[RMDB]
RNA sequence: GGGAACGACUCGAGUAGAGUCGAAAAUUUUCAACAUACCACAUCAAAUGUACAGAAAGAAAUUUGAAUCUGAGAACACUUUUGGCCUGUCAGGAAUUUCAGAUUUGUCUACCACUAGGUGGGAUGAUAGGUCCGUUAAAAGGAUUUUUUAUAAGGAACAUCGUUACAAUUUCGAUUGUAACGAUGUAAAAGAAACAACAACAACAAC
Reactivity to 2A3 in 0.01 (KOAc 150mM, MgCl2 10mM, bicine 150mM(pH8.5), 24C), signal-to-noise 1, nucleotides 027 to 156: u020u030u010u100c010a000a040c030a000u100a070c000c030a060c030a070u090c020a040a070a070u120g030u160a100c040a040g080a070a110a000g030a040a140a010u160u120u090g010a000a020u020c030u030g030a000g070a090a020c040a050c110u110u180u160u110g040g000c000c020u000g030u000c020a020g000g120a090a080u030u090u080c020a030g010a000u090u010u110g010u000c030u070a030c010c000a030c050u040a040g000g120u000g000g010g000a010u030g010a010u030a040g000g030u000c040c010g030u090u110a030a030a000a030g040g000a030u080u100u000u020u020u030a300u080a080a030g050g000a050
Reactivity to DMS in 0.01 (KOAc 150mM, MgCl2 10mM, bicine 150mM(pH8.5), 24C), signal-to-noise 2, nucleotides 027 to 156: u000u000u000u030c050a020a120c030a170u020a110c020c070a070c020a100u000c050a100a050a110u010g010u000a260c050a080g010a060a100a130g000a070a060a110u020u000u000g010a030a090u010c000u010g000a070g010a090a110c040a060c060u000u000u000u000g010g040c010c000u010g000u000c020a120g000g010a070a130u010u000u010c030a050g030a060u000u000u000g010u000c010u000a160c020c030a110c070u000a070g060g040u000g010g010g000a070u010g000a050u010a020g020g040u000c040c070g020u000u000a030a060a130a100g000g010a010u020u000u020u020u000u000a070u030a250a090g040g020a180